Conditions: 150 mM KOAc, 10 mM MgCl2 and 150 mM bicine (pH 8.5), 24 C.
This 177-nucleotide RNA was probed chemically with DMS and 2A3.
For 2A3 the reverse transcriptase was SuperScript II with manganese.
The DMS profile rests on 981 reads.
[RMDB]
RNA sequence: GGGAACGACUCGAGUAGAGUCGAAAAAGAAACCACGGAAACGAGCCUCCCUGGCAAGGUAAAUGGAACGGUCCCUCCGAGCAAAGGCACCAAAAGCUGAGAUGAGCUCAGCAAGGGUAAAAAAAAAGGAAUAUAGCUAGUUCGCUAGCUAUAUUCCAAAAGAAACAACAACAACAAC
Reactivity to DMS in 0.01 (KOAc 150mM, MgCl2 10mM, bicine 150mM(pH8.5), 24C), signal-to-noise 2, nucleotides 027 to 126: a090g010a140a050a160c020c010a080c030g010g000a080a070a080c030g010a070g010c080c020u000c040c000c000u000g000g020c030a020a040g000g010u030a010a060a100u020g000g000a060a150c050g020g010u000c010c010c010u000c020c000g000a140g010c080a060a030a090g000g010c030a080c030c040a040a010a050a190g010c010u000g000a010g000a300u010g010a220g020c000u000c010a020g000c010a010a100g010g000g020u000a000a010a000a060a000a000a070a150a190
Reactivity to 2A3 in 0.01 (KOAc 150mM, MgCl2 10mM, bicine 150mM(pH8.5), 24C), signal-to-noise 1, nucleotides 027 to 126: a030g090a090a040a000c020c030a040c020g000g080a070a080a040c050g000a040g000c000c000u020c000c000c000u000g030g050c000a030a040g030g000u090a060a090a140u150g020g030a070a050c060g040g050u080c000c000c010u040c010c000g040a020g000c030a060a140a060g100g000c060a020c000c000a030a090a070a060g000c020u020g010a010g010a100u270g100a060g130c000u000c020a000g000c020a030a050g060g020g010u130a190a000a000a000a000a000a000a000a040
About this RNA: It was measured as part of the RMDB library M2PK90. DMS adducts were read by reverse transcription with MarathonRT.